[RMDB]
RNA sequence: GGGAACGACUCGAGUAGAGUCGAAAAGUAUCCAUGUUCGCAUGGAUACGAAAUAUGCGCGCGUAUAUCCGGUUGGCUGCAUGCGCGCGUCUGGCUGGCCGGUGGUGCUAGUCUUCGGACUAGCAAAUAAGGGUUAUGUGUUCGCACAUAACCCUUAAAAAGAAACAACAACAACAAC
Reactivity to DMS in 0.01 (KOAc 150mM, MgCl2 10mM, bicine 150mM(pH8.5), 24C), signal-to-noise 3, nucleotides 027 to 126: g010u000a000u000c000c000a000u000g010u010u010c210g020c000a010u000g000g000a000u000a000c000g020a050a090a050u000a030u010g010c000g010c010g000c010g030u000a030u000a090u000c010c000g010g000u000u010g010g010c030u000g020c180a040u010g010c020g000c010g010c000g020u000c150u000g000g010c020u000g000g000c010c000g000g020u000g010g020u000g000c000u000a000g010u000c000u000u010c150g030g010a010c000u000a000g000c010a050a060a090
Reactivity to 2A3 in 0.01 (KOAc 150mM, MgCl2 10mM, bicine 150mM(pH8.5), 24C), signal-to-noise 1, nucleotides 027 to 126: g000u010a020u010c000c000a000u010g030u010u040c240g000c060a000u000g010g010a000u000a000c000g000a030a000a000u160a060u060g000c000g010c030g010c000g000u050a070u000a050u240c020c020g040g040u060u070g030g030c090u140g080c070a040u040g000c000g000c010g000c000g020u030c060u050g050g000c000u000g030g030c010c020g030g030u040g080g000u050g030c010u000a000g000u020c000u000u030c140g010g000a010c020u000a000g000c010a000a030a000

Structure probing data (DMS and 2A3) for a 177-nucleotide construct. The data come from the RNA Mapping Database (RMDB), library M2PK50. Values cover nucleotides 27 to 126. The 2A3 profile rests on 1,864 reads.